[RMDB]
RNA sequence: GGGAACGACUCGAGUAGAGUCGAAAAGAGGCUGGACUGCACAGAGUCAGGGUGCUUGUACACUGCAGGGCAAUGCACUGCAUGACAUUUUCUGAAAGGUUCUGUACCACCAGUGUACCCGGAACUCACUAGACGUUGUCUUCGGACAACGUCUAGUAAAAGAAACAACAACAACAAC
Reactivity to 2A3 in 0.01 (KOAc 150mM, MgCl2 10mM, bicine 150mM(pH8.5), 24C), signal-to-noise 1, nucleotides 027 to 126: g080a000g120g020c030u000g020g020a150c040u080g000c050a070c000a020g010a010g080u030c000a050g050g020g000u050g060c010u000u000g020u050a150c040a020c090u020g010c080a050g000g040g020c080a090a110u210g000c070a020c030u080g010c020a040u070g010a020c020a080u010u080u080u000c000u040g060a110a070a140g010g000u120u010c080u070g030u050a010c020c040a050c060c010a020g020u060g000u130a090c060c010c000g000g000a050a070c050u080c050
Reactivity to DMS in 0.01 (KOAc 150mM, MgCl2 10mM, bicine 150mM(pH8.5), 24C), signal-to-noise 2, nucleotides 027 to 126: g010a130g010g010c020u000g000g000a120c120u000g010c200a070c050a050g000a020g000u000c030a050g000g000g000u000g000c100u020u000g000u010a090c090a200c140u000g010c020a060g010g000g030c040a100a090u020g040c000a040c010u000g000c000a050u010g000a060c060a030u000u000u000u020c060u000g000a100a110a130g010g010u000u000c070u000g000u000a060c090c110a210c120c050a030g000u010g010u010a030c000c060c030g020g010a060a020c110u010c080